[RMDB]
RNA sequence: GGGAACGACUCGAGUAGAGUCGAAAAACAGUCAGUACGCUGACUGAGGGAAACGGGAGCCGGGCUUGGGACAAGAGCAAUCCCAAGUCCAAGGCCAAGUAGGCUCUAGUGAUGGUACGCCAUCACAAAAACUGGUCUACCUUCGGGUAGACCAGAACACACACGCAUACUUCGGUAUGCGUGUGUGAAAAGAAACAACAACAACAAC
Reactivity to 2A3 in 0.01 (KOAc 150mM, MgCl2 10mM, bicine 150mM(pH8.5), 24C), signal-to-noise 1, nucleotides 027 to 156: a000c000a000g000u000c000a000g010u050a020c190g040c080u000g000a000c000u020g020a040g030g060g030a010a080a160c180g030g020g020a010g050c050c020g010g000g000c010u010u000g000g000g010a000c060a120a090g050a030g070c030a000a050u010c020c000c000a000a010g000u020c000c000a000a020g030g000c000c000a010a010g070u050a030g030g120c000u030c030u090a050g000u000g000a000u010g000g000u020a030c150g050c050c000a010u000c000a000c000a010a000a050a000a010c000u010g010g000u000c010u000a000c000c000u000u110c240g120g020g000u000a000g000a020c000c000a000g000a000a000